RNA sequence: GGGAACGACUCGAGUAGAGUCGAAAAUCUUGACUCUUUAUCCAAUUUGCCAGUCUGUGUCUUUUAAUUGGAGAAUUUAGUCCAUUUACAUUUAAAGUGAAUAUUGUUAUGUGUGAAUUUGAUCCUGUCAUUAUGAUGUUAGCUGGUGAUUUUGCUCCUACUUACAUGACUUCGGUCAUGUAAGUAGAAAAGAAACAACAACAACAAC
Reactivity to 2A3 in 0.01 (KOAc 150mM, MgCl2 10mM, bicine 150mM(pH8.5), 24C), signal-to-noise 4, nucleotides 027 to 156: u100c060u040u100g070a030c010u030c020u100u130u130a090u060c040c010a060a110u040u000u120g010c010c000a030g030u110c080u060g020u010g020u060c020u010u160u060u100a080a080u080u060g020g000a050g060a050a070u060u090u060a090g030u000c030c020a040u010u110u140a050c030a030u140u160u150a100a130a020g100u090g090a090a060u100a110u090u070g040u070u050a040u070g080u000g020u010g040a070a060u050u050u050g030a020u050c000c020u040g010u050c030a010u010u130a070u240g020a000u020g020u030u040a010g050c000u000g010g050u030g030a070u000u050u050u080g010c010u030c030
Reactivity to DMS in 0.01 (KOAc 150mM, MgCl2 10mM, bicine 150mM(pH8.5), 24C), signal-to-noise 1, nucleotides 027 to 156: u010c100u000u000g020a110c080u010c040u010u010u000a110u010c040c020a070a090u000u000u010g030c000c020a030g010u000c020u000g040u000g010u000c020u010u010u000u000a040a120u000u000g010g040a060g020a060a080u000u010u000a090g000u010c020c030a080u010u060u000a060c020a040u000u000u000a080a070a090g000u010g010a060a100u000a060u010u000g010u000u010a060u000g020u000g040u000g020a030a080u000u000u020g010a110u000c050c020u000g020u000c050a060u010u010a070u000g010a070u000g000u000u000a140g050c000u000g010g000u010g010a120u000u000u000u000g010c280u000c030
Record summary:
This 207-nucleotide RNA was probed chemically with 2A3 and DMS. The data come from the RNA Mapping Database (RMDB), library OK3TST. As a SHAPE reagent, 2A3 marks flexible, mostly unpaired nucleotides at the ribose 2'-OH. Conditions: 150 mM KOAc, 10 mM MgCl2 and 150 mM bicine (pH 8.5), 24 C. For 2A3, 1,769 sequencing reads were counted. In probing experiments dimethyl sulfate is read out at A N1 and C N3, which are open when not base-paired.